[RMDB]
RNA sequence: GGGAACGACUCGAGUAGAGUCGAAAAUCAAGGGUGGCAGGCACACGCGGCAGGGUAACGACGUUGACUUUCUGCGCCCGCAGCUGGUCGAGCACAAUUUGUGGCCCGGCAUCCUGCCAGGUAAUUAUAACCUUUUACCUUUCGAGGUAAAAGGUUAAAAAGAAACAACAACAACAAC
Reactivity to 2A3 in 0.01 (KOAc 150mM, MgCl2 10mM, bicine 150mM(pH8.5), 24C), signal-to-noise 2, nucleotides 027 to 126: u110c050a070a080g140g050g090u030g020g050c010a000g020g000c080a040c040a020c260g070c030g050g000c060a160g040g000g030u030a050a000c050g100a020c030g150u090u050g040a080c020u100u080u040c020u010g000c010g080c050c060c050g010c000a010g020c010u060g020g010u050c040g060a020g060c050a010c020a140a140u130u090u180g110u080g010g070c000c000c000g010g000c010a020u020c000c000u000g000c040c020a010g020g020u030a050a050u150u130a060
Reactivity to DMS in 0.01 (KOAc 150mM, MgCl2 10mM, bicine 150mM(pH8.5), 24C), signal-to-noise 5, nucleotides 027 to 126: u020c090a110a110g010g020g030u000g020g030c010a030g000g000c300a120c160a110c170g010c090g000g010c030a090g020g010g000u010a070a200c140g010a060c250g020u010u000g010a050c100u010u000u000c010u000g010c230g000c120c090c120g010c040a010g020c090u000g020g020u000c010g000a040g030c050a050c080a110a150u000u010u000g030u000g020g010c000c010c000g020g020c020a120u000c020c010u000g010c010c020a030g000g000u000a050a100u000u000a130

Conditions: 150 mM KOAc, 10 mM MgCl2 and 150 mM bicine (pH 8.5), 24 C. This 177-nucleotide RNA was probed chemically with 2A3 and DMS. 2A3 adducts were read by reverse transcription with SuperScript II with manganese.